[RMDB]
RNA sequence: GGGAACGACUCGAGUAGAGUCGAAAAACAAGCCAAAAGACAAGGAUACCCUUUCUCAAGCAUUGUUAGUUUAUGGGCUACUAGUAAGCGAAGAAUGAUACAGGAUGAAAAAAACAUAUUAUGAGAUGACCUCAAUCAACUUCGGUUGAUUGAGGUCAAAAGAAACAACAACAACAAC
Reactivity to 2A3 in 0.01 (KOAc 150mM, MgCl2 10mM, bicine 150mM(pH8.5), 24C), signal-to-noise 1, nucleotides 027 to 126: a030c080a080a010g070c000c000a000a090a000a000g060a000c140a000a050g190g000a100u010a030c000c000c000u030u190u000c030u000c030a120a060g000c030a040u000u190g010u120u040a070g060u000u000u000a000u140g000g000g000c020u000a000c000u000a000g060u030a000a000g060c000g090a180a000g080a000a100u180g010a100u170a110c040a000g040g000a000u100g290a000a000a000a000a000a000a210c090a060u060a030u110u140a100u220g140a000g050a100u040